[RMDB]
RNA sequence: GGGAACGACUCGAGUAGAGUCGAAAAAGGUGUUUCGACACCUAAACCAUCCUAAGUCUUCUCGGGAAUUUGACAUGAUGGUGUCGGAAACGACACGCAUCAACAGCAAAUUUCUCUAGCGUGGAAGAUAUGGAGUAUUCAUUAUUUCGAUAAUGAAUGAUAAGGCACGUUUCGACGUGCCUUAUCAAAAAGAAACAACAACAACAAC
Reactivity to 2A3 in 0.01 (KOAc 150mM, MgCl2 10mM, bicine 150mM(pH8.5), 24C), signal-to-noise 3, nucleotides 027 to 156: a000g070g000u050g010u030u190u180c190g100a010c010a000c020c000u030a100a000a000c020c010a070u050c010c010u090a190a080g030u040c000u000u010c050u020c010g010g000g020a010a020u010u010u030g070a120c060a030u040g000a000u010g020g000u000g000u020c040g050g050a060a100a090c000g000a010c000a000c000g210c000a010u000c010a030a030c050a020g110c000a020a030a010u050u120u040c090u000c080u110a110g110c080g230u260g030g020a010a000g000a000u010a030u080g020g000a010g050u090a130u070u010c010a000u000u000a020u030u140u050c160g100a020u080a050a000u120g010a010a070
Reactivity to DMS in 0.01 (KOAc 150mM, MgCl2 10mM, bicine 150mM(pH8.5), 24C), signal-to-noise 1, nucleotides 027 to 156: a020g010g050u030g000u030u030u040c270g000a120c040a010c000c000u000a060a110a130c050c020a120u000c000c010u010a010a190g040u010c040u000u000c000u000c020g000g000g040a000a020u000u000u000g020a050c030a300u000g010a060u000g050g000u010g060u000c000g010g000a120a140a210c000g000a000c000a000c000g070c030a030u000c010a010a080c100a190g000c010a030a010a030u000u020u000c040u050c060u010a200g010c120g040u010g020g000a030a000g030a030u000a300u010g020g030a070g040u000a100u000u000c030a040u000u000a030u040u000u000c180g000a040u000a060a010u000g000a030a130

The record gives the reactivity of an RNA of 207 nucleotides to 2A3 and DMS. It was measured as part of the RMDB library RNAMAK. The 2A3 profile rests on 1,854 reads. DMS adducts were read by reverse transcription with MarathonRT. The DMS profile rests on 1,709 reads. Conditions: 150 mM KOAc, 10 mM MgCl2 and 150 mM bicine (pH 8.5), 24 C.